[RMDB]
RNA sequence: GGGAACGACUCGAGUAGAGUCGAAAAUGCCACCCCUCCAGUCUAGUCUUCACAUAGCAAGAAAAACGGUGUUCCUAAAACACAACUGGGGCUGCACCCCUCCCCUGCUAGAACCUGUCUCUGUCAGAAUGAACUUCAACCAGAAUGCUGCCAGGCAACUACGAUUAGUCUUCGGACUAAUCGUAGUAAAAGAAACAACAACAACAAC
Reactivity to 2A3 in 0.01 (KOAc 150mM, MgCl2 10mM, bicine 150mM(pH8.5), 24C), signal-to-noise 2, nucleotides 027 to 156: u080g050c010c010a070c030c020c000c000u000c020c010a030g020u020c010u050a000g010u000c000u020u060c030a120c030a140u140a020g000c040a000a040g050a080a160a010a020a030c050g030g030u030g010u080u100c010c050u020a080a080a100a000c040a000c000a000a110c160u090g000g010g010g000c020u050g030c020a070c000c010c000c000u010c010c010c000c000u010g050c000u000a000g020a090a010c000c000u040g050u050c020u000c030u090g020u010c010a040g040a110a040u070g020a050a080c010u080u030c060a030a050c020c000a020g010a040a010u110g020c010u030g050c000c040a000g040g000c010a010
Reactivity to DMS in 0.01 (KOAc 150mM, MgCl2 10mM, bicine 150mM(pH8.5), 24C), signal-to-noise 1, nucleotides 027 to 156: u000g020c050c040a160c010c020c000c000u010c030c030a190g000u010c020u010a110g030u000c010u000u000c060a100c060a190u000a070g050c040a130a100g030a030a030a030a120a000c040g000g030u000g000u000u000c050c020u000a080a070a060a070c100a060c060a050a080c070u000g020g010g040g080c030u010g010c060a300c010c020c000c040u000c030c010c030c060u000g010c030u000a090g000a080a060c050c000u040g030u000c010u000c050u030g010u000c020a130g000a150a120u000g000a040a080c030u000u000c070a040a040c060c030a100g000a050a090u000g000c010u000g030c060c010a070g000g030c020a060